This 207-nucleotide RNA was probed chemically with 2A3 and DMS. The data come from the RNA Mapping Database (RMDB), library ARCHII. For 2A3, 4,428 sequencing reads were counted. In probing experiments dimethyl sulfate is read out at A N1 and C N3, which are open when not base-paired. The DMS profile rests on 4,284 reads.
RNA sequence: GGGAACGACUCGAGUAGAGUCGAAAAAGUAACCCUUAUGCCAUGAUACCUACCUCUCUAGAUCCCAGCUGAACGAUGAGCACCGCCCGGUGGGGCGAGACGGACGCGAAUCUCCUCUCUGGAGGGAGAGGGGAUAUCGCGUCAACCGGAGGAAUCGGUCAAUUAGUAUGUUCGCAUACUAAUUGACAAAAGAAACAACAACAACAAC
Reactivity to 2A3 in 0.01 (KOAc 150mM, MgCl2 10mM, bicine 150mM(pH8.5), 24C), signal-to-noise 4, nucleotides 027 to 156: a000g180u100a080a110c000c000c010u050u080a150u130g020c020c020a030u100g020a050u090a150c010c010u020a040c000c010u030c020u030c020u050a050g020a120u070c000c020c000a020g030c050u070g060a100a040c040g040a080u100g060a020g030c020a010c030c020g040c000c010c010g000g100u140g030g050g000g030c020g000a000g020a010c070g030g010a000c000g010c000g000a000a000u000c000u000c000c000u000c000u000c010u070g160g100a150g050g110g000a000g040a000g000g000g000g000a000u000a030u010c000g010c000g000u000c000a000a000c000c010g010g030a000g030g000a030a050u100c090g020
Reactivity to DMS in 0.01 (KOAc 150mM, MgCl2 10mM, bicine 150mM(pH8.5), 24C), signal-to-noise 1, nucleotides 027 to 156: a110g000u000a120a170c020c000c030u000u000a030u000g000c000c000a080u000g000a140u000a070c020c010u000a100c040c000u010c020u000c010u000a110g000a080u000c010c010c030a100g010c000u000g030a080a040c020g010a100u010g000a060g030c040a090c070c010g020c000c000c000g000g010u000g000g000g030g000c020g000a030g010a120c070g010g000a000c010g070c020g020a080a100u000c000u010c010c000u010c010u000c000u000g060g030a250g010g020g000a020g000a040g020g010g010g000a020u000a030u000c020g010c000g080u000c020a010a030c040c030g000g010a110g020g000a070a110u000c080g020
Overview: The RNA was probed in 150 mM KOAc, 10 mM MgCl2 and 150 mM bicine (pH 8.5) at 24 C.